[RMDB]
RNA sequence: GGGAACGACUCGAGUAGAGUCGAAAACAGUACGUUAUCUUCUGUCAAACAGCAGAUACGGCACAUGCUAACAACAUUAACAGAUUUAAUGUUGCAAUCACUCGUGCCCAAAAAGGUAUUCUUUGUGCGAUAAAGGAGGGUUCGCCCUCCUUUAUCGAAAAGAAACAACAACAACAAC
Reactivity to 2A3 in 0.01 (KOAc 150mM, MgCl2 10mM, bicine 150mM(pH8.5), 24C), signal-to-noise 2, nucleotides 027 to 126: c040a040g070u130a030c040g060u060u090a010u000c020u060u000c000u050g080u100c090a120a140a150c000a050g020c010a000g010a020u010a020c000g000g000c000a010c010a070u090g000c030u070a060a040c010a000a010c000a000u010u040a010a040c050a140g150a300u000u000u100a000a000u010g000u000u010g040c060a000a050u040c010a010c040u110c040g000u020g010c000c000c000a030a130a000a030a030g150g030u130a180u140u020c020u010u070u060g070u050g110
Reactivity to DMS in 0.01 (KOAc 150mM, MgCl2 10mM, bicine 150mM(pH8.5), 24C), signal-to-noise 2, nucleotides 027 to 126: c070a070g010u000a090c080g010u000u010a010u000c000u000u000c030u000g000u010c290a110a140a300c050a050g010c030a000g000a030u000a020c110g000g010c060a040c030a080u000g010c080u000a100a150c000a000a000c000a000u010u000a000a050c240a210g030a160u010u010u000a000a010u000g000u000u000g010c020a060a080u010c030a070c130u000c050g020u000g000c010c000c080a060a060a030a070a030g000g020u000a030u000u000c050u000u000u000g000u000g010